The record gives the reactivity of an RNA of 207 nucleotides to 2A3 and DMS. DMS adducts were read by reverse transcription with MarathonRT. The reactions ran in a buffer of 150 mM KOAc, 10 mM MgCl2 and 150 mM bicine (pH 8.5), at 24 C. The data come from the RNA Mapping Database (RMDB), library OK3TST. For 2A3, 721 sequencing reads were counted. 2A3 adducts were read by reverse transcription with SuperScript II with manganese.
[RMDB]
RNA sequence: GGGAACGACUCGAGUAGAGUCGAAAAGCUUACGGUUUUGAUUAUAAUGUUUUGCCUAUGUUAUUCAGAAUCUAUAAAAUAGACGAUGAAGAAAUGGCCUUAAAUGACUUGCGCAUCAUGGAACAAAAAGCACUGGAAAUGAUGCAAGCAAAUAACAAAACUUUAGGUGUUUCGACACCUAAAGUUUAAAAGAAACAACAACAACAAC
Reactivity to 2A3 in 0.01 (KOAc 150mM, MgCl2 10mM, bicine 150mM(pH8.5), 24C), signal-to-noise 2, nucleotides 027 to 156: g070c030u080u120a060c070g040g000u040u030u040u110g060a060u060u200a080u150a300a090u090g040u060u070u100u040g030c020c010u110a110u180g080u210u090a060u090u000c010a000g020a000a020u000c010u040a040u070a130a230a170a080u050a000g010a030c030g030a020u000g000a000a000g010a010a070a030u040g000g000c040c060u040u100a020a100a090u160g020a090c060u010u010g000c030g000c020a020u010c000a010u010g030g010a070a070c020a020a080a000a050a010g120c100a060c050u030g070g000a020a040a000u000g000a000u020g010c010a000a000g000c000a040a040a120u090a080a050c010a020
Reactivity to DMS in 0.01 (KOAc 150mM, MgCl2 10mM, bicine 150mM(pH8.5), 24C), signal-to-noise 1, nucleotides 027 to 156: g000c010u000u000a120c140g010g020u030u010u000u000g030a160u000u000a160u000a140a040u000g010u000u000u000u000g030c040c010u000a150u000g040u000u000a050u000u000c010a000g000a150a020u000c010u000a030u000a050a070a080a300u000a000g030a010c050g000a300u000g010a020a040g000a030a080a080u000g000g050c060c040u000u000a030a050a020u000g000a010c030u000u000g050c000g000c010a010u000c010a040u000g020g050a120a170c030a100a070a080a220a190g000c110a190c090u000g010g010a140a020a030u000g010a050u000g000c040a050a050g070c010a000a050a150u030a010a050c060a110